[RMDB]
RNA sequence: GGGAACGACUCGAGUAGAGUCGAAAAUAAAAGUCGAAAGUAUUGGUAUAGUUAAGGUUGCGCUUGCCUAUUUAGGCAUACUUCUCAGGAUGGCGCGUUGCAGUCCAACAAGAUCCAGGGACUGUACAAAACAGGCUCGUGUUCGCACGAGCCUGAACGUAUAACGGAGGUUCGCCUCCGUUAUACGAAAAGAAACAACAACAACAAC
Reactivity to DMS in 0.01 (KOAc 150mM, MgCl2 10mM, bicine 150mM(pH8.5), 24C), signal-to-noise 2, nucleotides 027 to 156: u000a040a030a060a050g010u010c030g000a080a080a090g020u010a040u000u000g020g000u000a100u000a090g030u010u000a050a060g000g000u000u000g000c030g030c060u010u000g020c010c010u010a200u000u000u000a050g030g000c020a080u000a040c130u000u000c000u010c060a140g000g000a100u000g020g020c050g000c060g010u000u000g030c020a010g010u000c040c000a060a120c040a070a190g020a120u010c010c050a180g020g000g020a010c030u000g010u010a070c100a030a060a060a230c060a020g000g020c000u000c000g050u000g000u000u000c300g000c030a010c000g000a020g000c000c010u000g000a010a040
Reactivity to 2A3 in 0.01 (KOAc 150mM, MgCl2 10mM, bicine 150mM(pH8.5), 24C), signal-to-noise 2, nucleotides 027 to 156: u100a000a080a030a020g020u050c050g050a110a070a020g060u030a090u120u120g020g000u140a060u110a130g060u110u090a070a060g040g000u040u100g020c040g000c050u010u030g000c000c000u050a190u140u160u210a020g010g000c000a000u020a050c010u040u020c040u000c050a010g040g020a050u070g060g010c030g000c050g040u000u030g000c000a000g000u010c010c000a020a000c020a100a080g020a070u050c020c030a020g010g020g020a000c010u000g010u020a030c030a000a130a060a000c000a000g010g000c000u000c000g030u010g000u010u060c270g000c080a020c000g000a000g000c000c000u000g000a010a010
Structure probing data (DMS and 2A3) for a 207-nucleotide construct. The RNA was probed in 150 mM KOAc, 10 mM MgCl2 and 150 mM bicine (pH 8.5) at 24 C. For 2A3, 1,360 sequencing reads were counted. For 2A3 the reverse transcriptase was SuperScript II with manganese. For DMS the reverse transcriptase was MarathonRT. Values cover nucleotides 27 to 156.